The record gives the reactivity of an RNA of 207 nucleotides to DMS and 2A3. The RNA was probed in 150 mM KOAc, 10 mM MgCl2 and 150 mM bicine (pH 8.5) at 24 C. The data come from the RNA Mapping Database (RMDB), library OK3TST. Reactivities are rounded to 0.1 and cut off at 0 and 3. Reactivities are given for positions 27 through 156.
RNA sequence: GGGAACGACUCGAGUAGAGUCGAAAACAAGGGGAUGAAAAUGCAGAACUAAUUUUGUUCAGCGUAUUAGAGGCUGGUUUAGACAUCGAUUACGACAAUAACAAUCCAACACAAAAUUAUAUAACUGCUUAUCGUUCACUAGAACGUGUGUACAACAAAUUUAGCUGACUUUCGAGUCAGCUAAAUUAAAAGAAACAACAACAACAAC
Reactivity to DMS in 0.01 (KOAc 150mM, MgCl2 10mM, bicine 150mM(pH8.5), 24C), signal-to-noise 2, nucleotides 027 to 156: c080a190a060g090g020g020g000a100u000g020a050a040a140a110u000g030c010a090g010a070a130c090u020a030a140u000u010u000u000g020u000u000c060a110g000c030g050u000a120u030u000a170g010a090g010g050c020u010g010g030u010u000u000a170g010a110c090a060u000c120g000a120u010u010a070c100g030a120c060a060a120u000a010a050c070a010a080u000c040c030a030a030c110a100c070a070a020a070a040u000u010a070u000a130u000a080a160c010u010g000c040u000u000a120u010c010g020u000u000c010a030c140u000a120g010a030a080c060g060u000g030u010g020u000a070c040a040a110c170a050
Reactivity to 2A3 in 0.01 (KOAc 150mM, MgCl2 10mM, bicine 150mM(pH8.5), 24C), signal-to-noise 2, nucleotides 027 to 156: c050a050a010g040g000g000g040a040u050g060a080a020a030a020u090g000c010a010g020a080a000c030u070a090a170u040u050u080u040g020u040u060c020a020g040c010g040u110a050u050u120a060g060a030g070g080c060u060g000g040u030u060u090a030g000a020c020a060u030c090g020a010u090u150a160c120g020a010c100a070a160u090a070a050c060a030a010u110c080c060a050a020c030a030c000a110a090a030a020u190u050a010u040a010u060a140a050c000u040g020c000u110u110a120u160c010g000u010u000c020a030c230u090a140g040a120a020c070g050u050g020u020g040u110a030c010a020a030c030a000